Chemical mapping of a 177-nucleotide RNA with DMS and 2A3. For 2A3 the reverse transcriptase was SuperScript II with manganese. For 2A3, 32,644 sequencing reads were counted. For DMS, 36,448 sequencing reads were counted. Source: RMDB library OK1LIB, as collected in RNAgym. 2A3 is a SHAPE reagent: it acylates the 2'-hydroxyl of flexible nucleotides of all four kinds.
RNA sequence: GGGAACGACUCGAGUAGAGUCGAAAAUUUUCAUAGCAUACUUUAGCGUUCACAGCGAGCGCGGAGGUCCUGUCAACGCCCUUGUGCGCAGCGGGGGGUGGUUGGCUUGGGCUGGGCUUUGCUGUGAACCGUAAUAGGAGUUCGCUCCUAUUACGGUAAAAGAAACAACAACAACAAC
Reactivity to DMS in 0.01 (KOAc 150mM, MgCl2 10mM, bicine 150mM(pH8.5), 24C), signal-to-noise 6, nucleotides 027 to 126: u010u020u010u020c040a100u030a080g000c070a080u020a080c110u010u010u020a090g010c090g010u010u000c000a030c040a030g010c040g000a020g000c000g010c090g000g020a160g000g000u010c000c000u000g000u000c010a000a010c010g000c000c000c000u000u000g010u030g030c060g010c150a090g020c020g000g000g000g010g000g020u000g000g010u000u000g000g000c000u010u020g010g010g010c000u000g010g010g000c010u000u010u030g030c000u000g000u000g000a010
Reactivity to 2A3 in 0.01 (KOAc 150mM, MgCl2 10mM, bicine 150mM(pH8.5), 24C), signal-to-noise 9, nucleotides 027 to 126: u080u060u040u060c090a090u120a100g030c020a060u100a190c070u120u160u160a070g040c050g080u020u010c010a010c010a020g010c020g020a010g000c200g040c130g250g240a110g030g070u020c000c010u020g010u010c000a010a000c010g020c000c000c000u040u060g170u100g110c190g030c220a110g020c050g010g020g000g010g010g030u100g110g030u030u010g010g010c060u090u170g020g000g000c050u110g010g010g000c030u030u080u300g000c000u010g000u000g000a000